[RMDB]
RNA sequence: GGGAACGACUCGAGUAGAGUCGAAAAGACUUGUGGUUCGCCACAAGUCAAAUAAGCAUGUAGAAAUGGCCAAACUACAUGCAUCCAAAGAAAGGCCAUAAAAAAGGACAUGCUUCGGCAUGUCCAAUCGGUAUACCAUCUUCGGAUGGUAUACCGAAAAAGAAACAACAACAACAAC
Reactivity to 2A3 in 0.01 (KOAc 150mM, MgCl2 10mM, bicine 150mM(pH8.5), 24C), signal-to-noise 1, nucleotides 027 to 126: g000a010c000u020u020g000u020g050g040u040u030c210g060c060c000a010c000a000a000g000u000c000a000a000a000u000a040a000g000c000a000u000g010u000a000g010a030a020a050u010g020g000c000c010a020a020a030c000u000a000c010a010u000g000c000a020u030c000c020a030a090a050g170a080a120a040g000g010c000c000a020u060a000a080a000a000a010a000g020g000a010c000a000u000g010c000u080u100c200g090g000c000a000u010g020u020c000c000a000a000